Chemical mapping of a 207-nucleotide RNA with 2A3 and DMS. For 2A3, 1,328 sequencing reads were counted. For DMS, 3,824 sequencing reads were counted. It was measured as part of the RMDB library OK3TST. Values cover nucleotides 27 to 156. For DMS the reverse transcriptase was MarathonRT.
[RMDB]
RNA sequence: GGGAACGACUCGAGUAGAGUCGAAAAGAUAGCCUCCAUCAUGCUUGGUGUCAAUUGCGAGCCGCUGGGCGAUGGUUGUGUCGUGUUUGCCGACUACUCCGAUUUAGGUUUCUGGGAUUAUUUUGGCAGUUGGAUAAAGAGCCGGUAACACAGAAGCAGUCAAACGAUUUUUCGAAAUCGUUUGACUAAAAGAAACAACAACAACAAC
Reactivity to 2A3 in 0.01 (KOAc 150mM, MgCl2 10mM, bicine 150mM(pH8.5), 24C), signal-to-noise 3, nucleotides 027 to 156: g080a030u190a040g080c000c020u000c030c010a010u010c010a030u190g020c010u000u020g010g000u020g050u060c080a090a220u150u140g080c050g040a060g030c030c030g020c040u030g000g000g020c030g030a010u030g030g000u060u040g050u000g050u050c040g000u000g070u120u030u140g060c030c010g020a030c000u070a050c010u030c030c020g020a050u020u060u190a080g020g060u020u080u000c060u100g040g000g040a050u080u040a050u040u300u040u030g080g000c020a030g010u070u060g040g000a040u070a180a220a090g050a030g010c060c020g010g010u060a040a000c040a000c000a060g080a090a010g040c090
Reactivity to DMS in 0.01 (KOAc 150mM, MgCl2 10mM, bicine 150mM(pH8.5), 24C), signal-to-noise 2, nucleotides 027 to 156: g000a140u000a080g000c040c020u000c040c020a050u010c050a050u010g080c020u040u000g000g020u020g030u020c040a080a130u000u010g020c100g020a170g030c030c050g040c030u000g000g030g030c030g030a030u000g020g010u000u000g000u010g000u000c030g040u010g020u010u010u010g040c020c020g020a080c020u000a090c060u000c000c030g000a140u010u000u000a070g030g010u000u000u000c030u010g010g010g010a150u000u000a080u000u000u010u000g060g020c090a090g010u010u020g000g010a140u010a060a090a120g000a110g100c000c000g050g020u010a020a030c020a140c000a140g010a090a120g020c100